[RMDB]
RNA sequence: GGGAACGACUCGAGUAGAGUCGAAAAGGUUCGCACUUCGGUGCGAACCAAAGGCUAAGCAAUAAAUAUCACCUUGUUCGCUAAGCCACUAACGAGCAGAAAAAACCGUUUGGUUCGCCAAACGGAACUUCAGAUUAAAGUUCGCUUUAAUCUGAAGAAAAGAAACAACAACAACAAC
Reactivity to 2A3 in 0.01 (KOAc 150mM, MgCl2 10mM, bicine 150mM(pH8.5), 24C), signal-to-noise 4, nucleotides 027 to 126: g010g010u000u000c000g020c010a000c010u040u110c290g080g010u000g000c000g000a000a000c000c000a000a000a010g000g000c010u040a030a010g020c020a050a040u080a100a120a030u260a150u210c030a090c050c020u040u060g020u050u060c030g000c020u020a030a030g010c010c020a040c040u060a100a040c050g100a040g050c070a100g230a080a140a010a010a020a040c000c010g010u010u010u000g040g020u030u060c210g030c040c000a010a000a000c000g000g000a010a010
Reactivity to DMS in 0.01 (KOAc 150mM, MgCl2 10mM, bicine 150mM(pH8.5), 24C), signal-to-noise 4, nucleotides 027 to 126: g010g020u000u000c010g000c000a020c000u000u010c180g030g040u000g000c000g010a010a000c000c010a020a040a090g020g010c020u000a060a060g020c030a050a040u000a030a030a050u010a120u010c170a100c170c090u000u000g010u000u000c070g000c010u010a070a060g020c010c000a130c140u010a050a070c070g000a050g000c070a130g000a000a050a090a110a120a060c000c010g000u000u000u000g000g010u000u000c160g010c020c000a000a010a000c010g010g000a010a020

The data come from the RNA Mapping Database (RMDB), library M2PK50. Chemical mapping of a 177-nucleotide RNA with 2A3 and DMS. For DMS the reverse transcriptase was MarathonRT. For 2A3 the reverse transcriptase was SuperScript II with manganese.